[RMDB]
RNA sequence: GGGAACGACUCGAGUAGAGUCGAAAAGCCAGCCACAUGGACAAUACUCUCAAUUGCUUUGAUAUGUCCAGCCCUGUGCGAGCCAUGGGGGAGCCACUAGGGAUCCGGAGGUGAUCACAGCUCACUGGGGAUGAUAAGAUAUGGAGAUAAAUAAUCAUAUAUAGGUGAAUUUCGAUUCACCUAUAUAAAAAGAAACAACAACAACAAC
Reactivity to 2A3 in 0.01 (KOAc 150mM, MgCl2 10mM, bicine 150mM(pH8.5), 24C), signal-to-noise 2, nucleotides 027 to 156: g020c000c000a000g040c040c030a060c010a070u040g020g010a000c010a040a050u050a100c020u040c000u020c050a060a220u110u170g040c060u120u070u140g010a030u050a020u090g090u030c010c000a010g000c020c010c000u010g000u000g020c010g070a020g000c030c030a050u070g000g000g010g080g020a010g030c030c010a030c090u100a070g000g060g010a040u040c040c050g100g050a080g080g040u100g050a020u020c020a010c000a070g020c000u040c010a060c040u030g020g030g000g000a020u020g020a010u040a040a060g040a030u120a050u110g050g000a040g030a010u180a080a110a020u280a060a030u300c060a010
Reactivity to DMS in 0.01 (KOAc 150mM, MgCl2 10mM, bicine 150mM(pH8.5), 24C), signal-to-noise 2, nucleotides 027 to 156: g020c000c000a150g030c060c050a100c090a110u000g010g000a060c020a040a110u000a060c040u010c010u000c020a050a140u010u010g000c070u000u000u000g040a140u000a120u000g010u000c020c020a120g010c010c020c010u020g000u000g010c020g040a250g020c050c040a070u000g000g030g050g020g010a120g000c020c000a050c110u000a060g010g020g000a060u000c020c020g020g000a130g000g020u000g020a080u000c060a060c090a060g000c060u000c010a060c050u000g000g010g030g000a050u010g010a190u000a060a120g010a100u010a090u000g010g000a180g000a110u020a040a080a130u010a050a150u010c010a200